[RMDB]
RNA sequence: GGGAACGACUCGAGUAGAGUCGAAAAUUUAUCCUAGGGCUACAUAGUCUAGCAAAUAAUAGGAACAGUGAAAAUUAUUACACUGCUUUCGACUCCGAUUUUGAAAUGAAAAUAUUGAGGAGUGGAGCACUGUGGCUAUAUUCGUAUAGCCACAGUGAAAAGAAACAACAACAACAAC
Reactivity to 2A3 in 0.01 (KOAc 150mM, MgCl2 10mM, bicine 150mM(pH8.5), 24C), signal-to-noise 4, nucleotides 027 to 126: u110u040u050a090u010c000c020u060a070g060g150g000c040u050a020c010a250u300a080g040u040c020u080a010g020c000a000a060a230u200a050a120u120a120g000g040a000a000c000a000g010u020g110a040a040a070a140u180u150a100u000u080a050c030a000c020u030g120c070u060u050u060c010g010a020c000u000c000c000g020a020u010u050u070u070g140a150a080a060u170g060a170a020a170a070u190a020u050u020g020a000g020g010a000g000u080g050g040a020g010
Reactivity to DMS in 0.01 (KOAc 150mM, MgCl2 10mM, bicine 150mM(pH8.5), 24C), signal-to-noise 4, nucleotides 027 to 126: u030u070u050a070u010c010c000u000a080g000g010g020c010u000a040c090a140u000a110g000u030c070u000a030g020c070a110a080a080u030a140a060u030a130g000g000a040a150c000a010g010u000g000a130a080a110a170u020u040a050u030u040a140c010a010c000u000g010c170u000u000u000c020g000a060c010u000c000c050g000a170u000u010u000u000g010a070a170a120u030g010a100a070a070a060u020a030u010u000g000a250g000g000a020g010u000g000g000a080g000
About this RNA: Source: RMDB library OK1LIB, as collected in RNAgym. An RNA of 177 nucleotides, treated with 2A3 and DMS and read out base by base. The reactions ran in a buffer of 150 mM KOAc, 10 mM MgCl2 and 150 mM bicine (pH 8.5), at 24 C. 2A3 adducts were read by reverse transcription with SuperScript II with manganese. For DMS the reverse transcriptase was MarathonRT. Values cover nucleotides 27 to 126. For DMS, 5,803 sequencing reads were counted.